An RNA of 207 nucleotides, treated with 2A3 and DMS and read out base by base. The reactions ran in a buffer of 150 mM KOAc, 10 mM MgCl2 and 150 mM bicine (pH 8.5), at 24 C. Values cover nucleotides 27 to 156. The 2A3 profile rests on 2,938 reads.
RNA sequence: GGGAACGACUCGAGUAGAGUCGAAAAGACGUGAUGGGUGUGGAGAGGUGGAUCUUGUAGGUAAUGUCCCCCUUGAUGCGCUCCAUCUGCAGGUCGCCGUCCGUCACCAGGUCCGUGAACAUCUUUACGUUGUUCACCGUGAUGGUGUUUCCAUCGCGACCAAUCUAGGAUUCGUCCUAGAUUGGUCAAAAGAAACAACAACAACAAC
Reactivity to 2A3 in 0.01 (KOAc 150mM, MgCl2 10mM, bicine 150mM(pH8.5), 24C), signal-to-noise 4, nucleotides 027 to 156: g040a000c050g030u040g000a010u010g010g040g000u030g000u010g020g030a050g000a010g010g010u010g020g020a030u070c110u050u220g140u180a160g030g150u290a120a080u170g010u000c000c010c010c000c010u010u020g000a010u010g000c040g000c030u030c020c010a000u000c000u010g000c020a060g010g060u040c030g010c010c000g020u030c010c000g040u020c030a010c020c030a060g040g150u010c010c040g000u010g010a000a000c000a010u010c010u070u300u250a140c250g010u000u010g000u010u010c000a020c000c040g040u060g040a010u030g010g050u030g020u010u020u020c030c030a070u110c090g020c050
Reactivity to DMS in 0.01 (KOAc 150mM, MgCl2 10mM, bicine 150mM(pH8.5), 24C), signal-to-noise 2, nucleotides 027 to 156: g030a080c040g010u020g030a100u010g000g030g040u000g000u000g000g020a300g020a040g040g040u000g040g010a040u000c130u010u000g040u000a100g020g010u000a050a080u000g010u000c020c010c040c010c000u010u000g000a300u010g020c000g010c020u020c010c010a020u000c020u000g000c040a120g010g010u000c010g020c020c020g020u000c010c030g010u000c020a110c010c020a130g010g010u000c030c090g040u000g010a030a010c000a030u000c010u010u000u010a130c220g040u000u000g020u030u000c010a020c030c080g000u000g010a170u000g000g020u000g030u000u000u010c010c040a110u010c160g000c240